[RMDB]
RNA sequence: GGGAACGACUCGAGUAGAGUCGAAAAAGGCUGAGAAACAGUUCCUCGUAAGCCCUUCCGCACAGCUCACCCGCGUGCCUUAUACCUUCUGCGGAGUCGCAGCGUACCAAGGUGGUACCUGCUCGUGCUUCUGCCAGCCUAUCGCAGCGUAGCGGCGCAGUGGAUUAAAUUUCGAUUUAAUCCACUGAAAAGAAACAACAACAACAAC
Reactivity to 2A3 in 0.01 (KOAc 150mM, MgCl2 10mM, bicine 150mM(pH8.5), 24C), signal-to-noise 8, nucleotides 027 to 156: a000g030g000c020u040g020a020g050a070a170a060c100a120g080u140u100c020c010u030c010g040u060a070a120g020c000c000c010u070u020c040c020g030c020a040c030a040g010c010u060c040a090c010c020c010g040c030g050u040g040c000c010u200u160a160u080a140c000c030u100u090c030u100g000c010g030g030a050g030u080c030g000c010a020g010c020g060u000a000c010c010a120a120g300g080u160g050g000u140a010c000c000u010g010c010u020c040g050u110g010c000u030u040c010u060g060c050c020a020g010c020c020u080a090u100c030g000c040a020g020c040g090u070a020g020c020g020g000c030g000
Reactivity to DMS in 0.01 (KOAc 150mM, MgCl2 10mM, bicine 150mM(pH8.5), 24C), signal-to-noise 3, nucleotides 027 to 156: a020g030g060c000u000g000a160g010a110a050a090c030a160g010u010u000c020c000u000c040g020u000a130a060g020c010c010c030u010u000c030c020g020c070a120c070a150g020c040u000c060a090c030c010c020g000c150g000u000g020c020c050u000u000a100u010a070c040c030u010u000c030u000g040c000g010g000a080g000u010c070g050c020a050g020c170g020u000a020c030c010a150a250g030g020u000g030g020u000a020c010c020u000g000c010u000c020g040u000g030c010u000u000c030u010g010c010c100a110g010c020c040u000a100u000c060g010c020a100g020c060g030u010a110g020c050g010g020c030g010
The data come from the RNA Mapping Database (RMDB), library OK3TST. This 207-nucleotide RNA was probed chemically with 2A3 and DMS. The reactions ran in a buffer of 150 mM KOAc, 10 mM MgCl2 and 150 mM bicine (pH 8.5), at 24 C. 2A3 adducts were read by reverse transcription with SuperScript II with manganese.